RNA sequence: GGGAACGACUCGAGUAGAGUCGAAAAUUGAUAAUUUGUUGUGUAACUUCAUUUAAAUGAAUUGAAACAAAUUUAAUACAAGUGGAUGUAGGAUAACCGUCCGUCCUUUACAUUGGUGUAAAAGUGAACGACACAGACCUCUUCGGAGGUCUGUGAACACAACUAUUAGGUUCGCCUAAUAGUUGUGAAAAGAAACAACAACAACAAC
Reactivity to DMS in 0.01 (KOAc 150mM, MgCl2 10mM, bicine 150mM(pH8.5), 24C), signal-to-noise 3, nucleotides 027 to 156: u000u000g010a160u000a060a050u000u000u000g010u000u000g000u000g030u000a080a090c160u000u000c020a030u000u020u000a070a110a150u000g000a030a050u010u020g000a210a050a060c030a040a050a030u010u000u010a060a110u000a120c060a050a080g050u000g020g000a050u010g030u000a110g020g010a090u000a100a140c070c050g010u000c010c010g010u000c010c020u010u000u000a050c030a110u010u000g010g030u000g000u000a010a030a040a150g030u000g010a020a050c030g030a270c020a020c010a020g010a040c000c000u000c000u000u020c300g030g010a030g040g000u000c000u000g010u000g000a040a120
Reactivity to 2A3 in 0.01 (KOAc 150mM, MgCl2 10mM, bicine 150mM(pH8.5), 24C), signal-to-noise 3, nucleotides 027 to 156: u070u050g040a030u050a230a050u040u020u020g010u000u020g040u010g050u100a020a040c020u010u020c020a070u040u160u290a230a300a050u080g010a010a020u080u070g080a130a030a020c030a000a060a050u060u120u130a120a040u130a070c020a010a080g060u080g110g000a020u080g030u140a050g000g070a030u030a120a070c020c040g020u020c020c020g030u030c010c000u090u050u010a050c050a080u070u110g140g000u040g040u020a050a070a060a050g050u050g080a130a020c030g050a030c020a000c000a000g000a000c000c000u020c000u070u050c210g120g000a000g000g000u030c000u020g000u000g000a000a000